[RMDB]
RNA sequence: GGGAACGACUCGAGUAGAGUCGAAAAGUAGCCAGUCAGAAAUGAGCUUAUUCAUAAAAGUGCAGUAUGGUGGAGUCAGUCUGUAAUUUUAUGUAUAAGCUGGUCUCUAACUGAAACGUGCAGCAAAAUUCUUUUAGUUAUUCGUAACUAAAAGAAUAAAAGAAACAACAACAACAAC
Reactivity to DMS in 0.01 (KOAc 150mM, MgCl2 10mM, bicine 150mM(pH8.5), 24C), signal-to-noise 7, nucleotides 027 to 126: g010u010a110g010c100c010a030g010u000c040a020g000a010a030a030u000g000a020g000c010u000u000a010u000u000c000a000u000a010a010a010a010g010u000g000c000a000g010u020a140u010g000g030u030g020g010a170g010u020c030a120g000u000c000u000g010u010a020a020u000u000u000u000a000u010g000u000a000u000a000a000g000c000u000g000g020u000c020u010c000u010a040a020c010u000g000a070a100a090c100g010u010g010c060a120g020c110a060a060a090
Reactivity to 2A3 in 0.01 (KOAc 150mM, MgCl2 10mM, bicine 150mM(pH8.5), 24C), signal-to-noise 9, nucleotides 027 to 126: g030u040a020g060c030c000a010g010u020c010a000g030a030a060a020u100g060a060g000c000u000u000a000u000u030c000a000u000a000a010a000a010g030u020g010c000a000g010u170a070u100g060g100u150g110g090a110g180u170c010a010g060u010c000u000g000u000a010a020u000u010u000u000a000u010g010u000a000u000a000a000g000c000u000g010g010u000c000u000c000u010a030a030c000u010g010a100a060a040c090g070u120g030c040a050g030c040a050a070a040
This 177-nucleotide RNA was probed chemically with DMS and 2A3. Reactivities are given for positions 27 through 126. Values are in units of 0.01, from 0 to 300, in steps of 10. Source: RMDB libraries RFM100 and RFMREP, as collected in RNAgym.